Chemical mapping of a 177-nucleotide RNA with 2A3 and DMS. The data come from the RNA Mapping Database (RMDB), library OK2TST. Values are in units of 0.01, from 0 to 300, in steps of 10. For DMS the reverse transcriptase was MarathonRT.
RNA sequence: GGGAACGACUCGAGUAGAGUCGAAAAGGGAGCCUUGUUCUUCAAUUCGGUAACGAUACGCUCUGCCACUUUCUUGCCGACGCCCGGCGCGCGCGAAACCAUGGCAAUGUCGCGCAGCGCAAUCGCAGUCGUAUCACUAGUUCGCUAGUGAUACGACAAAAGAAACAACAACAACAAC
Reactivity to 2A3 in 0.01 (KOAc 150mM, MgCl2 10mM, bicine 150mM(pH8.5), 24C), signal-to-noise 2, nucleotides 027 to 126: g030g030g020a000g030c020c040u040u100g060u030u060c010u060u040c030a100a190u110u010c030g030g030u040a120a030c090g000a030u020a050c110g020c020u030c030u100g030c020c010a040c030u050u060u040c020u030u050g010c020c000g000a040c010g040c000c000c000g040g000c010g030c000g010c000g000c000g020a060a030a010c090c020a070u110g090g000c070a090a120u090g060u070c020g010c000g000c100a040g000c000g000c040a020a060u180c090g000c060a020
Reactivity to DMS in 0.01 (KOAc 150mM, MgCl2 10mM, bicine 150mM(pH8.5), 24C), signal-to-noise 3, nucleotides 027 to 126: g000g010g030a080g010c040c100u000u010g030u000u000c040u020u000c060a110a100u000u000c060g000g020u000a060a100c140g030a040u010a080c140g000c030u000c060u000g000c010c010a030c080u000u000u020c040u000u000g000c030c040g010a070c250g000c010c020c030g000g000c010g030c010g020c030g000c010g020a060a070a090c130c060a070u000g030g000c100a080a080u000g030u020c020g000c000g020c000a090g020c010g020c010a040a080u000c100g030c170a100